[RMDB]
RNA sequence: GGGAACGACUCGAGUAGAGUCGAAAAAUGACGAGUCAGGUCAGGCUCCGCACUGGGUUUGGUCGCCCAGGGGAUGGAGACACGGAAAGGACAUCGUGUGCUAUAAGUCUGACGUAAGUCGAGCUUGGCUCUAUGUUCUCUUCGGAGAACAUAGAGCAAAAGAAACAACAACAACAAC
Reactivity to DMS in 0.01 (KOAc 150mM, MgCl2 10mM, bicine 150mM(pH8.5), 24C), signal-to-noise 1, nucleotides 027 to 126: a090u020g030a070c000g000a120g010u000c040a040g010g050u030c070a060g000g030c010u010c030c000g000c050a090c010u010g000g000g000u020u000u020g030g040u000c180g000c000c010c000a040g010g000g020g030a100u010g010g000a030g020a040c020a020c040g010g010a050a090a080g000g030a090c170a070u000c020g020u010g000u010g040c040u010a070u010a150a070g000u000c030u010g020a040c020g000u040a080a150g000u010c000g000a150g000c070u020u010g000
Reactivity to 2A3 in 0.01 (KOAc 150mM, MgCl2 10mM, bicine 150mM(pH8.5), 24C), signal-to-noise 1, nucleotides 027 to 126: a000u050g040a000c030g000a020g080u070c000a020g000g060u020c000a000g030g010c010u000c000c000g040c000a050c020u000g000g000g000u020u030u140g110g010u050c040g040c000c000c000a000g100g000g060g050a120u170g000g010a020g000a020c000a020c000g030g130a130a020a070g240g040a040c050a120u100c030g030u000g040u020g080c030u080a060u030a300a030g010u000c010u000g000a020c020g040u060a020a030g020u020c010g010a010g010c020u020u080g060